[RMDB]
This 207-nucleotide RNA was probed chemically with DMS and 2A3. For DMS the reverse transcriptase was MarathonRT. Conditions: 150 mM KOAc, 10 mM MgCl2 and 150 mM bicine (pH 8.5), 24 C. 2A3 adducts were read by reverse transcription with SuperScript II with manganese. It was measured as part of the RMDB library M2RFPK. Values cover nucleotides 27 to 156.
RNA sequence: GGGAACGACUCGAGUAGAGUCGAAAAGCCACAUGUCCCGUGACAUUGCGAAAGCAAGGCUGGCGGUAGGUAGUCCUGGGCGGCGACAGCCUUGGACUGCGGCGUAAAGGUGUACCUGGGGCCGUUAUAACGCGGUAACAGUUCGCUGUUACCGCAACUUACUAGAACUCUUCGGAGUUCUAGUAAGAAAAGAAACAACAACAACAAC
Reactivity to DMS in 0.01 (KOAc 150mM, MgCl2 10mM, bicine 150mM(pH8.5), 24C), signal-to-noise 2, nucleotides 027 to 156: g030c010c020a070c040a070u000g020u000c010c030c090g000u000g010a050c010a100u010u000g000c000g030a190a170a260g000c030a060a050g010g020c030u000g060g020c040g020g000u000a030g040g040u000a030g010u000c010c010u000g010g010g000c020g030g040c070g050a090c140a160g000c000c020u040u000g000g010a040c000u000g030c030g020g000c050g030u000a050a070a070g000g030u000g000u000a050c050c020u010g000g000g000g000c030c000g040u000u000a090u000a100a130c190g020c020g000g000u000a020a020c010a020g010u000u000c170g030c010u000g000u000u000a010c000c000g010c000a010a010
Reactivity to 2A3 in 0.01 (KOAc 150mM, MgCl2 10mM, bicine 150mM(pH8.5), 24C), signal-to-noise 2, nucleotides 027 to 156: g040c040c000a020c010a070u090g030u050c000c030c050g050u080g020a050c060a090u060u060g000c010g040a110a010a020g040c020a050a010g020g040c040u040g020g020c020g020g010u060a050g030g050u010a000g010u010c000c030u010g010g000g000c010g010g030c070g070a050c090a010g020c000c000u000u000g010g000a000c010u010g000c000g020g000c000g020u070a050a060a020g000g020u050g020u100a080c000c010u010g000g000g000g010c010c000g000u010u060a150u050a180a060c150g000c000g010g000u000a000a000c000a010g010u070u070c150g080c110u000g000u000u010a000c010c000g010c000a000a000